[RMDB]
RNA sequence: GGGAACGACUCGAGUAGAGUCGAAAAUUUGACUCCGUUAAGGACUGAAGACCAAACCCCAACGGAUGCUCUAGUAAGCGUUCUCUGGUUGGCUUGCUAGCUAAGAUUAAAUCAGAGAAUCCUACGUUCGGGAUAAUGAACGAUUCCCGCCUUGAGGGACGUGAUGAGAGUUCGCUCUCAUCACGUCAAAAGAAACAACAACAACAAC
Reactivity to 2A3 in 0.01 (KOAc 150mM, MgCl2 10mM, bicine 150mM(pH8.5), 24C), signal-to-noise 2, nucleotides 027 to 156: u110u060u180g020a020c000u010c000c000g040u070u100a050a160g060g030a070c130u110g090a140a010g110a100c040c010a060a040a090c010c010c000c020a010a010c000g000g000a000u020g000c000u000c000u000a000g000u040a020a000g010c000g030u050u000c020u000c000u000g000g040u000u000g030g000c000u000u000g010c010u020a010g050c020u020a030a000g000a060u260u120a270a000a000u030c000a010g000a000g000a020a070u000c040c000u040a090c030g020u020u000c010g060g000g020a100u110a300a120u190g020a010a000c000g000a000u040u020c000c020c000g060c070c080u080u080g080a110g080g040
Conditions: 150 mM KOAc, 10 mM MgCl2 and 150 mM bicine (pH 8.5), 24 C. Chemical mapping of a 207-nucleotide RNA with 2A3. For 2A3 the reverse transcriptase was SuperScript II with manganese. It was measured as part of the RMDB library ARCHII.